[RMDB]
RNA sequence: GGGAACGACUCGAGUAGAGUCGAAAAGAAACUUACAAGGAUUCCCCUAGUAACGGCGAGCGAACCGGGACCAGCCCAGCUUGAGAAUCGGGUGGCUUCGUCACCUGAAUUGUAGUCUGGAGAGGCGGUACUAAAUAACCUUCGGGUUAUUUAGUACAAAAGAAACAACAACAACAAC
Reactivity to 2A3 in 0.01 (KOAc 150mM, MgCl2 10mM, bicine 150mM(pH8.5), 24C), signal-to-noise 2, nucleotides 027 to 126: g010a020a160a020c090u100u140a050c110a130a100g010g020a180u010u060c030c000c000c000u040a040g030u040a090a020c030g050g000c050g020a040g000c050g010a050a000c010c030g000g020g040a010c010c000a020g050c000c010c000a010g040c020u080u050g060a040g100a100a050u050c010g020g000g000u000g000g010c060u130u130c150g020u010c000a010c010c000u010g020a020a010u070u050g030u040a030g020u020c030u000g000g040a100g000a010g130g000c010g090
Reactivity to DMS in 0.01 (KOAc 150mM, MgCl2 10mM, bicine 150mM(pH8.5), 24C), signal-to-noise 3, nucleotides 027 to 126: g000a070a100a070c070u000u000a090c130a140a100g010g010a240u000u000c000c010c000c100u010a110g010u000a050a050c070g000g010c080g010a090g010c060g030a070a040c060c050g010g000g010a080c030c050a080g000c070c020c020a030g010c030u010u000g000a110g010a070a150u000c020g030g000g020u000g000g000c040u010u000c250g010u000c000a010c010c000u000g000a020a080u000u010g000u000a070g000u010c020u000g000g000a090g000a160g010g020c080g010